[RMDB]
RNA sequence: GGGAACGACUCGAGUAGAGUCGAAAACUCUUUCACGGUUACGUCUGUCUCUGGCAGAGCAGACUGUCAGGAGGACGAGGUCACCAUCUUCACGAAGCCAAAGCCAAAUUCCGCCUUGUCCUGUAAACGGUACCGGUAUCUUCGGAUACCGGUACCGAAAAGAAACAACAACAACAAC
Reactivity to 2A3 in 0.01 (KOAc 150mM, MgCl2 10mM, bicine 150mM(pH8.5), 24C), signal-to-noise 1, nucleotides 027 to 126: c000u050c000u030u160u060c040a020c020g100g000u070u080a000c020g060u000c050u060g120u220c000u000c000u140g160g010c080a000g000a050g000c000a040g050a050c000u000g100u000c000a000g000g110a020g060g000a030c040g020a000g000g000u030c030a000c020c000a130u060c010u240u180c010a060c100g050a030a010g000c040c000a000a020a000g050c000c000a000a080a150u020u060c000c000g010c000c050u040u000g000u020c000c030u000g180u160a090a030a080
The record gives the reactivity of an RNA of 177 nucleotides to 2A3. The RNA was probed in 150 mM KOAc, 10 mM MgCl2 and 150 mM bicine (pH 8.5) at 24 C.